Source: RMDB library OK1LIB, as collected in RNAgym. Structure probing data (DMS and 2A3) for a 177-nucleotide construct. For 2A3, 4,620 sequencing reads were counted. For DMS, 3,444 sequencing reads were counted.
[RMDB]
RNA sequence: GGGAACGACUCGAGUAGAGUCGAAAAGAUCUCUAAGUCGUCCGCACACGCAUACUCUUCGGAGUAUGGUCUUCGGACCGUGUGCGAGUAGGCGAAAGGACGACUAGAAGCCUACGUGAGAUCGAAAGGGUGUCAGUGCCUUCGGGUGCUGACACCCAAAAGAAACAACAACAACAAC
Reactivity to DMS in 0.01 (KOAc 150mM, MgCl2 10mM, bicine 150mM(pH8.5), 24C), signal-to-noise 2, nucleotides 027 to 126: g000a000u000c000u000c000u000a170a120g000u010c010g000u000c000c000g000c010a020c000a010c010g000c110a040u000a000c000u000c000u000u090c190g050g050a030g000u000a010u000g000g000u020c000u000u000c230g010g010a000c130c210g050u000g000u000g000c000g000a070g020u000a000g010g000c110g020a020a090a300g030g010a000c020g000a020c000u020a300g000a170a040g000c030c000u000a010c020g000u000g000a000g010a000u000c010g030a050a130a160
Reactivity to 2A3 in 0.01 (KOAc 150mM, MgCl2 10mM, bicine 150mM(pH8.5), 24C), signal-to-noise 4, nucleotides 027 to 126: g000a000u000c000u000c000u010a020a020g000u000c000g000u000c000c000g000c000a000c010a000c000g130c020a000u000a000c000u010c000u030u080c300g140g000a000g000u000a010u010g020g020u000c010u030u050c170g100g010a040c010c010g000u000g000u000g010c020g010a000g000u010a020g000g020c010g040a050a010a000g010g000a000c000g000a010c000u020a010g070a190a000g070c000c000u030a020c000g040u040g010a010g000a000u000c010g010a100a040a050

Description:
High 2A3 reactivity points to a flexible backbone, as in loops and unpaired stretches. The RNA was probed in 150 mM KOAc, 10 mM MgCl2 and 150 mM bicine (pH 8.5) at 24 C.